The record gives the reactivity of an RNA of 177 nucleotides to DMS and 2A3. For DMS the reverse transcriptase was MarathonRT. The DMS profile rests on 11,481 reads. The RNA was probed in 150 mM KOAc, 10 mM MgCl2 and 150 mM bicine (pH 8.5) at 24 C.
RNA sequence: GGGAACGACUCGAGUAGAGUCGAAAACCCUCACUCUUCGGAGUGAGGGAAAUCUGAUUCCCAAUAGCUGGGUAUCCGGCCUAAGACGGAUAGGCGUUGCCAAAAGAUCUGGCUUCGGCCAGAUCAAGACUAGAGUAAUGUUCGCAUUACUCUAGUCAAAAGAAACAACAACAACAAC
Reactivity to DMS in 0.01 (KOAc 150mM, MgCl2 10mM, bicine 150mM(pH8.5), 24C), signal-to-noise 7, nucleotides 027 to 126: c010c000c000u000c000a010c000u000c000u000u010c200g020g010a020g020u000g000a010g000g000g010a000a010a040u010c120u000g010a200u000u000c000c000c000a120a100u000a110g010c050u000g010g010g020u000a050u000c010c010g000g000c040c130u010a150a070g000a080c060g010g000a050u000a040g000g000c030g000u000u000g010c020c040a080a100a100a110g000a000u000c000u000g010g000c000u000u010c180g030g010c010c000a010g000a000u000c010a060a060
Reactivity to 2A3 in 0.01 (KOAc 150mM, MgCl2 10mM, bicine 150mM(pH8.5), 24C), signal-to-noise 3, nucleotides 027 to 126: c000c000c000u000c000a000c000u010c000u040u090c270g130g000a010g000u000g000a000g000g000g010a080a050a010u060c050u090g060a170u020u010c000c000c000a000a060u120a040g000c040u060g030g010g100u100a070u070c030c010g070g000c030c040u100a080a040g090a040c040g030g030a040u030a040g050g030c130g190u210u260g050c020c020a030a080a040a070g000a000u000c000u000g000g000c000u000u030c170g080g000c000c000a000g000a000u010c000a000a010